[RMDB]
Source: RMDB library OK1LIB, as collected in RNAgym. Structure probing data (2A3) for a 177-nucleotide construct. The reactions ran in a buffer of 150 mM KOAc, 10 mM MgCl2 and 150 mM bicine (pH 8.5), at 24 C.
RNA sequence: GGGAACGACUCGAGUAGAGUCGAAAAAUACCAUGCCAGGCAAUCGAAGUCGAUUUGCCUUCGAGCACGAGUGCAUGAACGUAUGUGCGUUUGUGCGUGUGUACGUCUGUUUGCGUAGUUAUGGUAAGCUUUUAUCGCGGUUCGCCGCGAUAAAAGCAAAAGAAACAACAACAACAAC
Reactivity to 2A3 in 0.01 (KOAc 150mM, MgCl2 10mM, bicine 150mM(pH8.5), 24C), signal-to-noise 3, nucleotides 027 to 126: a000u100a010c000c000a000u040g080c010c030a020g000g000c010a020a050u000c000g110a110a000g200u040c040g140a250u120u050u300g070c000c000u020u030c040g000a010g000c000a000c030g060a020g070u290g000c000a000u070g000a050a000c000g070u070a130u300g130u300g010c000g000u010u000u020g070u050g020c000g010u030g010u020g000u010a000c040g010u010c090u100g050u010u060u050g040c060g040u050a030g060u180u270a030u040g040g000u010a060a040